The record gives the reactivity of an RNA of 177 nucleotides to DMS and 2A3. The RNA was probed in 150 mM KOAc, 10 mM MgCl2 and 150 mM bicine (pH 8.5) at 24 C. The 2A3 profile rests on 4,196 reads. 2A3 adducts were read by reverse transcription with SuperScript II with manganese. Reactivities are given for positions 27 through 126. It was measured as part of the RMDB library OK2TRN.
RNA sequence: GGGAACGACUCGAGUAGAGUCGAAAAAGAGACAUAAUCCAAACAGUAGGGAAGUCAUGCAACAGACAGGAGCUGACUCAACUAUGUGAGAGCACAAUUGCGGUUCAUCACGCUGAUGGGAUAACCCGGUGUAUGACUGAUUCGUCAGUCAUACACCAAAAGAAACAACAACAACAAC
Reactivity to DMS in 0.01 (KOAc 150mM, MgCl2 10mM, bicine 150mM(pH8.5), 24C), signal-to-noise 4, nucleotides 027 to 126: a090g000a140g000a110c100a080u000a080a080u000c010c020a050a100a160c080a060g000u010a020g020g020g000a170a080g010u000c050a020u000g030c020a030a180c040a120g010a130c240a100g000g000a270g020c040u000g000a020c010u000c090a100a190c060u010a030u000g000u010g010a050g000a100g020c000a050c090a120a070u010u020g020c100g020g020u000u000c040a110u010c030a030c040g020c090u000g000a110u000g000g000g010a060u010a080a160c010c040c030
Reactivity to 2A3 in 0.01 (KOAc 150mM, MgCl2 10mM, bicine 150mM(pH8.5), 24C), signal-to-noise 5, nucleotides 027 to 126: a000g170a000g020a000c040a090u200a040a060u100c030c010a020a070a060c020a050g120u120a030g030g020g050a070a000g010u010c000a030u280g000c040a080a050c000a050g300a060c050a120g020g070a010g020c020u000g000a020c000u000c030a050a050c020u050a040u170g030u020g010a020g010a010g010c020a000c010a170a300u230u270g120c200g020g000u040u040c040a170u010c000a210c030g020c030u030g010a080u090g060g000g000a010u030a080a080c000c000c040